[RMDB]
RNA sequence: GGGAACGACUCGAGUAGAGUCGAAAAGAUGGCGGAAGAGGACUUCGGUAUUGCCAAUGUUGAAGCCCUUGCGUCUGGAACUCCAGUGAUCGCUUGGGGGCAAGGCGGAGUACGGCAUACCGUGCAACGAGCUACAUCCCUUCGGGGAUGUAGCUCGAAAAGAAACAACAACAACAAC
Reactivity to 2A3 in 0.01 (KOAc 150mM, MgCl2 10mM, bicine 150mM(pH8.5), 24C), signal-to-noise 1, nucleotides 027 to 126: g050a040u170g000g050c080g040g100a130a010g030a120g110g100a020c050u060u040c050g090g000u040a080u050u190g040c060c000a090a070u160g030u030u070g110a100a100g050c010c000c050u050u020g040c050g040u030c070u020g000g040a220a110c070u140c070c000a020g070u060g180a120u110c010g000c030u070u110g070g020g000g000g000c030a020a020g030g050c000g030g050a120g080u040a050c070g000g000c000a020u070a050c000c000g000u000g000c040a050a060
Reactivity to DMS in 0.01 (KOAc 150mM, MgCl2 10mM, bicine 150mM(pH8.5), 24C), signal-to-noise 1, nucleotides 027 to 126: g010a080u000g010g010c040g030g030a090a110g000a060g010g030a080c160u010u000c000g020g020u010a030u010u060g010c040c040a210a130u010g010u000u000g000a070a290g030c030c000c000u030u000g010c040g020u000c050u020g000g030a300a160c300u030c030c000a030g000u040g010a040u000c000g030c050u000u010g000g010g010g050g000c010a060a120g020g000c010g010g000a200g050u000a060c090g020g030c110a050u000a010c000c010g010u010g000c170a060a130